[RMDB]
RNA sequence: GGGAACGACUCGAGUAGAGUCGAAAACGACUGAUCAUGAUUGGGCAGAGUCAGUCUUCAAUCCAAAAGAGGAGUACCCGAUCCUGGAGACCGCUCGGGAUACUAAGAAUGUUCAAUCAAAUAUUAAAUUACUCACCCUAUUCGUAGGGUGAGUAAUAAAAGAAACAACAACAACAAC
Reactivity to 2A3 in 0.01 (KOAc 150mM, MgCl2 10mM, bicine 150mM(pH8.5), 24C), signal-to-noise 3, nucleotides 027 to 126: c050g040a040c010u020g030a040u100c070a130u110g010a030u030u040g010g000g020c020a030g020a030g210u040c010a030g000u020c000u110u070c020a050a090u050c020c010a030a080a050a020g130a050g130g010a020g020u010a020c000c000c000g010a030u040c000c030u140g120g000a080g050a080c020c000g040c070u010c000g010g000g000a060u030a030c020u020a010a090g030a210a100u050g020u050u010c020a020a020u010c010a030a070a060u220a050u160u280a110a120
Reactivity to DMS in 0.01 (KOAc 150mM, MgCl2 10mM, bicine 150mM(pH8.5), 24C), signal-to-noise 3, nucleotides 027 to 126: c190g010a050c050u010g010a040u020c250a130u010g000a050u010u010g000g000g010c030a050g000a170g020u000c020a020g000u000c020u010u000c120a070a130u000c020c040a050a080a120a170g010a160g020g000a030g000u000a020c010c010c000g000a060u000c050c040u010g020g030a160g000a110c100c200g020c200u000c010g000g000g010a090u000a000c050u010a050a090g010a120a080u000g000u000u000c000a010a030u000c010a070a110a100u020a120u000u010a070a080